[RMDB]
RNA sequence: GGGAACGACUCGAGUAGAGUCGAAAAAAGGUGCGUCAGAUGGGGAGCAUUGUGAGCACACUGUCUUGCAAGGGAAAAUGUCGCGUUGACGCUGCGAGGAGGCGUGUCAGCACCAGCAUGUCGGGUGUACCUGGCAAGGAUUCGUCCUUGCCAGGUAAAAAGAAACAACAACAACAAC
Reactivity to 2A3 in 0.01 (KOAc 150mM, MgCl2 10mM, bicine 150mM(pH8.5), 24C), signal-to-noise 4, nucleotides 027 to 126: a000a000g090g000u030g010c030g060u050c010a020g030a140u080g000g000g000g040a040g050c020a050u000u080g060u030g050a010g040c010a030c010a070c130u080g050u090c020u020u040g000c020a040a060g030g080g010a060a090a040a060u140g010u020c030g020c030g050u010u040g010a020c030g020c070u030g000c020g010a010g040g000a010g010g030c010g010u030g040u030c030a010g010c030a010c040c000a020g020c050a020u090g030u070c040g040g000g020u090g000
Reactivity to DMS in 0.01 (KOAc 150mM, MgCl2 10mM, bicine 150mM(pH8.5), 24C), signal-to-noise 3, nucleotides 027 to 126: a040a010g010g010u000g010c050g030u000c020a090g010a080u030g010g010g030g020a090g030c050a120u020u020g010u000g010a080g000c040a040c100a090c110u020g000u020c020u020u000g000c080a040a060g020g000g040a050a080a050a070u010g000u010c060g000c100g000u010u000g000a100c040g000c050u020g010c020g010a060g020g020a080g010g000c010g010u010g000u010c070a090g000c010a030c020c010a080g020c110a090u000g020u020c040g000g000g000u010g000
Chemical mapping of a 177-nucleotide RNA with 2A3 and DMS.
Source: RMDB library OK1LIB, as collected in RNAgym.
For DMS the reverse transcriptase was MarathonRT.
The RNA was probed in 150 mM KOAc, 10 mM MgCl2 and 150 mM bicine (pH 8.5) at 24 C.
For DMS, 7,686 sequencing reads were counted.
The 2A3 profile rests on 4,246 reads.